This 177-nucleotide RNA was probed chemically with DMS and 2A3.
[RMDB]
RNA sequence: GGGAACGACUCGAGUAGAGUCGAAAACAGUCACACACAGUGAGAGUCACUCACACAGUCAGUGUGACUCAGUCUCAGAGUGAGACUCACAGUGACUCAGACAGACUGAGUCAGUGUGAGUGUCUCAGGCUGCGGAGUUAUUCGUAACUCCGCAGCCAAAAGAAACAACAACAACAAC
Reactivity to DMS in 0.01 (KOAc 150mM, MgCl2 10mM, bicine 150mM(pH8.5), 24C), signal-to-noise 1, nucleotides 027 to 126: c220a020g010u000c000a050c000a050c030a190c060a100g000u000g000a040g010a260g000u020c300a120c000u010c000a020c000a100c110a040g000u000c210a010g020u000g000u010g020a050c030u000c120a050g010u000c000u020c030a160g050a060g080u000g000a020g010a020c000u000c010a020c030a030g000u000g000a030c000u010c000a000g000a300c300a150g000a110c010u000g010a000g010u000c000a020g000u000g010u000g000a000g000u030g010u000c000u000c000a020
Reactivity to 2A3 in 0.01 (KOAc 150mM, MgCl2 10mM, bicine 150mM(pH8.5), 24C), signal-to-noise 2, nucleotides 027 to 126: c020a000g020u000c000a020c000a000c000a020c070a050g010u020g000a020g030a040g230u180c040a050c150u000c000a000c020a000c010a010g120u210c040a040g000u020g010u010g040a000c000u010c000a020g010u010c000u020c040a080g020a020g160u150g040a040g060a020c010u040c010a020c000a050g230u020g000a000c000u020c000a000g020a180c030a010g090a140c030u030g000a010g020u030c020a030g040u010g000u040g020a000g000u020g020u040c000u010c000a010
2A3 adducts were read by reverse transcription with SuperScript II with manganese. The data come from the RNA Mapping Database (RMDB), library OK2TRN. Reactivities are given for positions 27 through 126.